[RMDB]
RNA sequence: GGGAACGACUCGAGUAGAGUCGAAAAGGACAUGAACCAACCGCGCGUCGCUCCGCGCAGAUGCAGCCCGAAAGCCGUGACACCGGUAGCACCGGCCGCCGCGAUCUGGCCGAGCAAGAGAUCGAGGCUAAUAGUAGCGCUUCGGCGCUACUAUUAGAAAAGAAACAACAACAACAAC
Reactivity to DMS in 0.01 (KOAc 150mM, MgCl2 10mM, bicine 150mM(pH8.5), 24C), signal-to-noise 7, nucleotides 027 to 126: g020g010a100c060a070u030g010a100a120c030c030a090a120c070c040g000c080g020c040g020u010c080g010c050u000c090c020g010c040g020c040a050g000a060u020g020c060a090g000c020c020c020g010a050a080a140g000c010c020g020u010g010a090c090a110c040c020g000g000u020a070g020c060a270c040c010g000g000c070c050g010c030c040g000c030g000a050u000c030u010g000g000c010c030g000a120g000c070a070a070g000a050g000a050u010c020g010a120g010g000
Reactivity to 2A3 in 0.01 (KOAc 150mM, MgCl2 10mM, bicine 150mM(pH8.5), 24C), signal-to-noise 7, nucleotides 027 to 126: g030g010a040c040a100u170g060a060a040c020c010a020a020c020c010g010c000g000c010g060u070c040g020c030u010c010c020g010c000g010c030a010g020a040u100g010c020a010g020c010c010c020g060a100a040a010g020c030c030g050u050g030a020c030a020c080c010g000g040u060a030g030c040a050c050c000g020g000c010c010g010c000c010g040c010g010a020u000c020u040g030g000c010c010g020a030g040c040a060a020g030a000g010a100u060c030g010a030g060g050